[RMDB]
RNA sequence: GGGAACGACUCGAGUAGAGUCGAAAAGAUGGGUCCGAUGGAUUAAUGCGUCGCCGGCCAUUGGAUCCUGAUUGAUAGAUUGACGGCGACGGUCGGAUCACUCGGUAAUUCGGUGCUCGACGAGUGAUCCGUGAUGAUAGUUAAGAAGAGCACCUAAGAUAUGGCGAUUAUUCGUAAUCGCCAUAUCAAAAGAAACAACAACAACAAC
Reactivity to 2A3 in 0.01 (KOAc 150mM, MgCl2 10mM, bicine 150mM(pH8.5), 24C), signal-to-noise 3, nucleotides 027 to 156: g060a060u110g000g000g000u000c000c000g010a000u010g000g020a030u060u170a230a070u300g060c000g010u010c000g010c010c010g040g000c000c000a000u000u000g010g000a000u010c020c000u020g070a040u050u130g050a040u030a150g150a090u020u290g040a030c030g010g000c000g010a000c000g010g010u020c010g010g030a000u000c000a000c000u000c030g100g050u180a130a100u170u180c070g000g000u010g000c000u000c010g020a020c000g000a000g000u000g000a010u000c000c000g000u000g020a020u040g020a010u050a200g170u300u150a130a020g060a080a000g000a030g000c000a000c000c000u000a030a000
Chemical mapping of a 207-nucleotide RNA with 2A3. Conditions: 150 mM KOAc, 10 mM MgCl2 and 150 mM bicine (pH 8.5), 24 C.